[RMDB]
RNA sequence: GGGAACGACUCGAGUAGAGUCGAAAAUGGACUUUUUACAGUUCCUACUUAUCCGGUUUUAACGCUGUUUUAUUGGCGCAAAGGUGUACGGAUAAACAACUAAUAAUUAAACCUUUUGUGUGCGAAAAUUGGACGUUUAGGUUCGCCUAAACGUCAAGCACGUAAGAGGAUUCGUCCUCUUACGUGCAAAAGAAACAACAACAACAAC
Reactivity to 2A3 in 0.01 (KOAc 150mM, MgCl2 10mM, bicine 150mM(pH8.5), 24C), signal-to-noise 2, nucleotides 027 to 156: u090g010g030a060c080u070u060u040u180u300a180c200a050g020u030u180c000c000u030a060c020u020u010a010u010c020c010g090g020u070u100u030u140a050a010c030g010c010u010g070u050u040u130u120a190u070u190g070g000c000g030c000a010a000a000g000g060u110g000u030a000c000g000g000a020u010a010a080a050c030a040a000c040u140a120a100u110a200a050u260u060a110a050a010c000c000u000u090u130u080g080u040g030u040g060c100g000a030a080a080a140u140u180g120g000a010c010g000u000u000u000a000g000g030u010u030c150g090c000c000u000a000a000a000c000g000u000c000a000a000
The data come from the RNA Mapping Database (RMDB), library M2RFPK. Chemical mapping of a 207-nucleotide RNA with 2A3.